[RMDB]
RNA sequence: GGGAACGACUCGAGUAGAGUCGAAAAGAUAUGGAGAUAUCCACGAGAGCUAUAAUCUAGCUUCGGAAACGAAGCUAGGUAGCUCGAGUGGAGUAUCUCCUAAGUCAAACCUACCUUCGGGUAGGAACGACGUACGUAAGUUCGCUUACGUACGUCGAAAAGAAACAACAACAACAAC
Reactivity to 2A3 in 0.01 (KOAc 150mM, MgCl2 10mM, bicine 150mM(pH8.5), 24C), signal-to-noise 1, nucleotides 027 to 126: g040a030u080a090u260g000g000a010g010a000u010a010u000c020c000a010c010g020a040g000a000g000c030u060a030u060a300a300u230c000u000a000g000c010u000u000c000g020g000a000a060a000c010g020a000a000g000c000u000a010g030g000u000a000g010c000u000c000g000a000g000u000g010g000a020g020u000a000u000c000u010c000c000u000a040a010g000u000c000a040a040a180c000c000u000a000c010c000u070u100c300g170g020g000u000a020g040g000a020a020
Reactivity to DMS in 0.01 (KOAc 150mM, MgCl2 10mM, bicine 150mM(pH8.5), 24C), signal-to-noise 2, nucleotides 027 to 126: g010a040u000a300u000g000g000a030g010a000u010a030u000c000c000a010c000g040a300g000a020g000c010u000a110u010a300a110u030c000u000a000g010c000u000u000c000g040g000a120a070a170c000g010a000a020g000c000u000a000g000g010u000a010g000c000u000c000g020a300g000u000g000g010a050g020u020a020u000c000u000c000c000u010a010a100g000u000c040a150a120a120c000c000u000a000c000c010u000u040c130g030g000g000u010a000g000g010a030a100

Chemical mapping of a 177-nucleotide RNA with 2A3 and DMS. Conditions: 150 mM KOAc, 10 mM MgCl2 and 150 mM bicine (pH 8.5), 24 C. DMS adducts were read by reverse transcription with MarathonRT. DMS (dimethyl sulfate) methylates the pairing face of unpaired adenines and cytosines.